The record gives the reactivity of an RNA of 177 nucleotides to DMS.

RNA sequence: GGGAACGACUCGAGUAGAGUCGAAAAGAUAUGGAGUUAAGUGGAGCCGUUUGACGGACAUCGGAAACGAUGUCCCGAGGAACUACUCCCUUAACUCCUAAGUCGGACUCCGCCUUCGGGCGGAGAAGACUUUCUGCAUCUUCGGAUGCAGAAAGUCAAAAGAAACAACAACAACAAC
Reactivity to DMS in 0.01 (KOAc 150mM, MgCl2 10mM, bicine 150mM(pH8.5), 24C), signal-to-noise 1, nucleotides 027 to 126: g010a050u000a300u000g000g000a000g000u000u010a000a010g000u000g020g030a020g010c050c120g020u000u010u000g010a300c300g000g000a020c000a000u010c020g030g010a120a140a190c030g030a010u000g000u010c000c000c010g000a220g000g000a000a000c040u000a090c000u000c000c000c000u000u000a000a000c000u000c000c000u000a000a020g000u020c000g020g010a300c000u000c000c010g020c000c000u000u000c260g040g010g000c000g000g010a000g010a010a090
Conditions: 150 mM KOAc, 10 mM MgCl2 and 150 mM bicine (pH 8.5), 24 C. Source: RMDB library TTRDEL, as collected in RNAgym.